[RMDB]
RNA sequence: GGGAACGACUCGAGUAGAGUCGAAAAGAAUCACCGUACCUAUUUAGCUUUACGCUCCAAGAUCGGUGGAUAGCAGCCCUAUCAAUAUCUAGGAGAACUGUGCUAUGUUUAGAAGAUUAGGUAGUCUAUUACACAGCCAUGUUCGCAUGGCUGUGAACAACGAGUUACCUUUCGAGGUAACUCGUUGAAAAGAAACAACAACAACAAC
Reactivity to DMS in 0.01 (KOAc 150mM, MgCl2 10mM, bicine 150mM(pH8.5), 24C), signal-to-noise 3, nucleotides 027 to 156: g000a170a170u000c030a250c000c020g050u000a070c020c000u000a090u010u000u000a040g010c050u000u010u010a130c120g000c000u000c040c040a070a070g020a020u010c070g020g030u000g020g010a060u000a100g000c030a200g000c100c070c040u000a110u000c040a090a120u000a070u010c050u010a110g010g000a070g020a050a080c020u010g030u000g000c050u000a070u000g010u020u000u010a130g020a070a130g010a090u000u000a060g010g000u000a120g000u000c050u000a120u030u010a250c010a010c000a020g000c000c010a010u000g010u000u000c260g050c030a030u000g010g000c000u000g000u000g000a020a060
Reactivity to 2A3 in 0.01 (KOAc 150mM, MgCl2 10mM, bicine 150mM(pH8.5), 24C), signal-to-noise 3, nucleotides 027 to 156: g050a010a070u060c040a000c070c030g060u040a020c000c010u040a080u110u090u080a010g010c000u170u110u100a090c060g000c010u000c000c010a000a030g000a060u050c070g060g110u100g020g060a020u050a030g050c070a000g060c070c000c000u040a040u020c030a040a020u060a000u130c000u020a010g040g010a020g040a060a080c070u060g010u020g050c010u040a020u120g090u060u090u080a090g040a180a020g010a100u110u060a030g050g000u010a040g070u060c050u060a150u040u100a050c000a000c000a000g000c020c000a000u010g010u020u080c060g010c140a000u000g000g000c000u000g000u000g000a000a000